This 177-nucleotide RNA was probed chemically with DMS and 2A3. For 2A3, 5,182 sequencing reads were counted. The data come from the RNA Mapping Database (RMDB), library TTRDES. DMS adducts were read by reverse transcription with MarathonRT.
[RMDB]
RNA sequence: GGGAACGACUCGAGUAGAGUCGAAAAGAUAUGGAUCCACGUAGGGAGACCCAUCGUCUCGGAAACGAGAUUGGGUCGAAGAACUACUGGAUCCUAAGUCAAAUCUGUAUUCUUCGGAAUACAGAAAGUAAGAAGAUGACUUCGGUCAUCUUCUUACAAAAGAAACAACAACAACAAC
Reactivity to DMS in 0.01 (KOAc 150mM, MgCl2 10mM, bicine 150mM(pH8.5), 24C), signal-to-noise 2, nucleotides 027 to 126: g010a010u000a040u010g000g000a020u000c000c000a010c300g020u010a000g000g040g010a060g000a000c000c000c000a030u000c190g000u010c000u000c010g020g000a020a000a050c000g000a000g000a020u010u000g010g000g010u000c000g000a080a100g000a200a300c000u000a010c000u000g000g000a000u010c000c000u000a000a070g000u000c010a130a140a200u000c000u000g000u000a020u000u000c000u000u050c260g020g010a020a020u000a000c010a000g000a000a030a140
Reactivity to 2A3 in 0.01 (KOAc 150mM, MgCl2 10mM, bicine 150mM(pH8.5), 24C), signal-to-noise 1, nucleotides 027 to 126: g010a000u010a000u040g000g000a000u000c010c010a040c180g000u020a010g040g020g080a210g000a060c000c000c040a070u130c050g100u010c010u000c000g000g000a010a010a000c010g000a010g000a000u030u020g000g000g000u000c000g000a020a020g030a000a010c000u000a000c000u020g000g000a000u000c000c000u000a000a000g000u000c020a020a000a300u030c000u020g010u000a020u000u020c000u020u050c300g160g010a010a010u010a000c000a000g020a010a000a000